[RMDB]
RNA sequence: GGGAACGACUCGAGUAGAGUCGAAAAGCGAAAAUCGGACGGUGGCUGCAAUUCGCAUCGCAAAACCGCGGCAAGUGGAGUUAGCGAGAGGAGGCUGGGUUUUGGCUUCCUUAAGCAAUCGGUCACCAUAAGAGGAUUCGCUUCGGCGAAUCCUCAAGUAAUGAAAUGAGUUCGCUCAUUUCAUUACAAAAGAAACAACAACAACAAC
Reactivity to DMS in 0.01 (KOAc 150mM, MgCl2 10mM, bicine 150mM(pH8.5), 24C), signal-to-noise 2, nucleotides 027 to 156: g010c010g010a050a010a090a080u000c040g050g010a100c030g010g020u010g040g040c030u000g040c060a040a210u000u000c080g010c070a160u010c040g010c020a050a070a080a190c030c040g000c020g030g000c090a090a190g020u010g000g010a160g000u020u010a140g030c010g000a300g010a010g010g010a040g020g030c000u000g040g000g010u000u000u000u010g020g010c010u010u000c020c010u000u000a040a300g040c020a080a100u000c020g030g020u010c040a020c000c010a160u010a080a130g000a040g000g000a040u000u000c010g000c010u000u000c300g060g030c010g000a010a010u000c000c000u000c010a000a110
Reactivity to 2A3 in 0.01 (KOAc 150mM, MgCl2 10mM, bicine 150mM(pH8.5), 24C), signal-to-noise 3, nucleotides 027 to 156: g040c020g060a050a010a010a110u170c080g050g050a040c070g040g000u000g000g010c010u020g030c060a020a050u000u050c100g000c040a040u010c000g020c020a010a070a000a040c030c020g020c030g130g020c170a200a100g000u010g020g020a100g010u050u060a000g030c020g000a030g000a000g040g010a000g020g010c010u060g090g070g150u070u140u160u300g020g000c010u010u000c000c010u010u020a040a020g000c000a000a020u120c010g000g000u010c010a000c000c000a010u070a060a030g000a000g000g000a000u000u000c000g000c000u000u000c090g070g000c000g000a000a000u000c000c000u000c000a000a000